[RMDB]
RNA sequence: GGGAACGACUCGAGUAGAGUCGAAAACGACGGGUCUUCGGACCCGUCGAAAUAAUGCGUAGCUCGCGCUACGCAGGCAUCGUGUAGGUCGAGCCACCUACAAAAGCUUCGAGUUCGCUCGAAGCAACUACCUAACAUUCUUCGGAAUGUUAGGUAGAAAAGAAACAACAACAACAAC
Reactivity to 2A3 in 0.01 (KOAc 150mM, MgCl2 10mM, bicine 150mM(pH8.5), 24C), signal-to-noise 5, nucleotides 027 to 126: c010g010a000c000g010g000g000u020c030u060u110c260g130g020a000c000c000c010g000u000c000g000a000a000a000u120a020a040u040g010c010g000u000a000g000c030u050c160g110c040g000c050u000a000c000g000c010a000g010g030c020a100u120c080g040u020g000u090a010g000g040u080c040g040a030g080c070c040a010c000c000u000a010c000a010a110a010a010g000c010u000u000c000g000a000g020u060u100c180g070c090u000c000g000a000a000g000c000a000a010
Reactivity to DMS in 0.01 (KOAc 150mM, MgCl2 10mM, bicine 150mM(pH8.5), 24C), signal-to-noise 5, nucleotides 027 to 126: c010g010a010c000g020g010g010u000c000u000u000c190g040g000a010c000c000c000g000u000c000g010a010a060a050u010a130a100u000g000c010g020u010a000g010c000u000c300g000c300g000c000u000a010c000g010c000a010g000g010c150a100u010c100g020u010g010u000a010g010g000u000c050g000a130g010c050c090a150c000c000u000a010c010a050a070a090a130g010c000u000u000c010g010a010g010u000u000c200g000c000u000c010g000a010a010g000c020a020a050
An RNA of 177 nucleotides, treated with 2A3 and DMS and read out base by base. The data come from the RNA Mapping Database (RMDB), library M2PK50.